[RMDB]
RNA sequence: GGGAACGACUCGAGUAGAGUCGAAAAAAAUGGGCUGAAGUUGGGAGAGCAGAAGUCUGCUUUUCAAACAGAGUGGAACCGCGCGGUUAAAGCGUCUCUGUCAAAAAGAAAAUGAAAACAAAUUGAACUAAACGUUCAUAUUCGUAUGAACGUUUAGAAAAGAAACAACAACAACAAC
Reactivity to DMS in 0.01 (KOAc 150mM, MgCl2 10mM, bicine 150mM(pH8.5), 24C), signal-to-noise 4, nucleotides 027 to 126: a060a060a060u000g000g000g010c020u000g010a070a080g020u000u010g000g010g000a060g010a040g000c030a050g010a250a110g010u000c020u010g020c010u000u000u000u000c060a070a090a030c030a060g000a060g020u000g010g010a090a070c110c110g000c070g020c050g010g010u000u000a070a070a160g000c030g010u010c000u000c020u000g000u000c110a050a030a030a070a040g000a050a040a060a060u010g000a060a040a030a050c140a050a090a110u020u010g000a110a120
Reactivity to 2A3 in 0.01 (KOAc 150mM, MgCl2 10mM, bicine 150mM(pH8.5), 24C), signal-to-noise 1, nucleotides 027 to 126: a000a000a060u070g000g020g020c040u040g010a060a010g090u150u080g030g040g010a080g000a010g000c020a020g040a200a020g100u050c000u080g000c000u010u060u020u070c000a020a010a000c010a000g030a000g060u090g010g090a020a010c050c040g000c000g000c040g130g000u070u150a160a070a000g010c000g070u000c050u000c010u000g050u050c050a030a020a000a090a150g070a020a140a020a030u200g040a060a120a030a040c050a010a110a040u050u180g000a050a010

An RNA of 177 nucleotides, treated with DMS and 2A3 and read out base by base. Conditions: 150 mM KOAc, 10 mM MgCl2 and 150 mM bicine (pH 8.5), 24 C.